[RMDB]
Structure probing data (2A3 and DMS) for a 177-nucleotide construct. For DMS the reverse transcriptase was MarathonRT.
RNA sequence: GGGAACGACUCGAGUAGAGUCGAAAAGUGCGGAUUGAAAUUCAUGGGAGCCUCUCCAUAAUGGAUGAACGCCGCGGUAGUGCGCGCAGUCGCGACGUAAACGCUCUGUCUUCCCGUUCAGGCCUCAGGCUACCAUAUAUUUCGAUAUAUGGUAGCCAAAAGAAACAACAACAACAAC
Reactivity to 2A3 in 0.01 (KOAc 150mM, MgCl2 10mM, bicine 150mM(pH8.5), 24C), signal-to-noise 3, nucleotides 027 to 126: g050u050g000c020g000g070a110u090u120g050a160a070a030u090u090c040a040u080g030g010g020a040g060c050c030u120c030u000c030c000a040u220a250a060u120g010g030a010u050g010a060a000c040g000c020c010g000c010g010g010u070a080g070u020g040c030g000c020g000c040a010g020u060c040g000c010g040a030c020g020u010a010a200a010c020g010c000u030c000u030g070u010c020u020u000c020c000c010g000u080u090c060a020g010g080c010c010u030c050a030
Reactivity to DMS in 0.01 (KOAc 150mM, MgCl2 10mM, bicine 150mM(pH8.5), 24C), signal-to-noise 6, nucleotides 027 to 126: g020u000g010c010g000g020a140u010u000g000a130a100a040u000u000c050a020u000g010g000g000a070g010c160c090u010c120u010c010c010a070u010a090a040u000g000g000a050u000g000a120a100c100g010c010c010g010c010g010g000u000a080g020u000g000c060g010c050g010c060a210g010u000c030g010c010g010a020c020g000u000a070a100a120c060g010c010u000c010u000g010u010c080u000u000c010c000c010g010u010u000c130a100g010g000c050c090u000c120a170
Overview: For 2A3 the reverse transcriptase was SuperScript II with manganese. The RNA was probed in 150 mM KOAc, 10 mM MgCl2 and 150 mM bicine (pH 8.5) at 24 C. For DMS, 8,295 sequencing reads were counted.